An RNA of 177 nucleotides, treated with DMS and read out base by base.
For DMS the reverse transcriptase was MarathonRT.
It was measured as part of the RMDB library TTRINS.
Conditions: 150 mM KOAc, 10 mM MgCl2 and 150 mM bicine (pH 8.5), 24 C.
Values cover nucleotides 27 to 126.
The DMS profile rests on 1,274 reads.

RNA sequence: GGGAACGACUCGAGUAGAGUCGAAAAGAUAUGGAAGAAAGGGAGAAUACUCUCCCACUAGAGCUACCAUGUCGGAAACGACAUGAUGCUCAUGGGAGAGUAUUCGUUGAUCUUUCUUCCUAAGUCAGUGUACUUCUAGGUUCGCCUAGAAGUACACAAAAGAAACAACAACAACAAC
Reactivity to DMS in 0.01 (KOAc 150mM, MgCl2 10mM, bicine 150mM(pH8.5), 24C), signal-to-noise 1, nucleotides 027 to 126: g000a070u000a300u010g000g000a020a000g000a010a010a010g000g000g000a060g010a010a000u010a000c020u000c000u000c000c010c000a020c300u010a150g000a000g000c000u070a100c210c000a000u000g000u000c000g000g000a130a040a280c010g000a030c000a010u010g010a080u000g000c000u000c000a070u010g000g000g000a030g010a020g020u000a010u010u000c000g000u000u040g000a010u000c000u000u010u000c000u000u000c000c000u000a010a080g010u000c060a150